RNA sequence: GGGAACGACUCGAGUAGAGUCGAAAAGAUAUGAGAAUCGAAGCCACUGGCGGAAGCCACUUAUCAGUCGUGCAGCAUAGUGACCAAUUCUAUUGCCGGGACUGCCAGAAGACAUGGGAUGCGAAUGACAUCGACCCACCCCCAUGCACCGCGCCGGCCGUGCAUAGCAUUUCGAUGCUAUGCACGGAAAAGAAACAACAACAACAAC
Reactivity to 2A3 in 0.01 (KOAc 150mM, MgCl2 10mM, bicine 150mM(pH8.5), 24C), signal-to-noise 1, nucleotides 027 to 156: g030a030u130a040u130g060a060g030a100a070u110c030g000a030a020g020c060c000a110c080u060g010g000c030g020g020a040a010g010c020c000a060c050u080u150a090u190c030a020g060u060c060g120u100g070c000a000g000c020a110u090a080g000u020g020a070c070c000a040a020u130u000c020u120a040u100u160g040c040c000g010g000g100a010c020u130g000c020c010a070g010a170a010g060a050c030a010u010g000g000g030a030u080g040c030g040a080a000u150g010a070c010a110u010c000g020a070c000c000c000a020c070c000c000c000c000a020u040g010c020a010c000c040g010c000g000c010c010g000g000
An RNA of 207 nucleotides, treated with 2A3 and read out base by base. Values are in units of 0.01, from 0 to 300, in steps of 10. For 2A3, 592 sequencing reads were counted. Values cover nucleotides 27 to 156.